[RMDB]
RNA sequence: GGGAACGACUCGAGUAGAGUCGAAAACUUAGGUCAAGAUUUUAUGUUAUUUAGGUCAAGGUUAAUUGUGUUGUUCAAAUCUUGUAUAACUCUACUGCUUGUCUGUCUUUCUUACCCAUUAUCGAGAAGGGAACAUAAAAAUCUUACACUAUGACUGCCUGUACGAUAAAUUCGUUUAUCGUACAGGAAAAGAAACAACAACAACAAC
Reactivity to 2A3 in 0.01 (KOAc 150mM, MgCl2 10mM, bicine 150mM(pH8.5), 24C), signal-to-noise 6, nucleotides 027 to 156: c020u040u040a010g030g050u070c080a020a000g010a020u010u020u020u030a030u030g010u030u060a250u130u140u170a070g050g000u070c050a050a030g070g010u100u110a120a070u240u120g010u010g000u060u010g010u020u030c020a070a050a110u020c090u100u070g020u050a040u010a060a010c000u000c020u080a050c030u050g220c010u050u040g020u030c010u020g080u010c030u030u100u000c010u020u060a110c030c010c020a130u150u140a130u270c130g040a050g040a120a050g020g010g020a010a000c000a020u090a060a090a010a030a020u010c010u030u070a030c110a040c050u100a070u210g070a070c030u060g060
Reactivity to DMS in 0.01 (KOAc 150mM, MgCl2 10mM, bicine 150mM(pH8.5), 24C), signal-to-noise 2, nucleotides 027 to 156: c040u000u000a050g020g020u000c030a060a050g010a080u000u010u000u000a040u010g000u020u000a110u000u010u000a080g020g010u010c040a060a070g010g000u000u000a070a060u000u010g030u010g010u010u000g000u010u000c060a080a090a100u000c020u000u000g020u000a240u010a060a040c040u000c000u000a040c030u000g010c070u000u010g010u000c030u010g000u000c020u010u000u000c030u000u000a230c060c030c030a150u010u000a140u000c080g010a140g000a080a050g010g010g010a040a030c020a060u000a020a030a040a050a050u000c010u010u000a070c050a090c060u000a030u000g000a120c070u000g030
Chemical mapping of a 207-nucleotide RNA with 2A3 and DMS. Values cover nucleotides 27 to 156. The reactions ran in a buffer of 150 mM KOAc, 10 mM MgCl2 and 150 mM bicine (pH 8.5), at 24 C. DMS adducts were read by reverse transcription with MarathonRT. For 2A3 the reverse transcriptase was SuperScript II with manganese. The 2A3 profile rests on 3,618 reads. Reactivities are rounded to 0.1 and cut off at 0 and 3.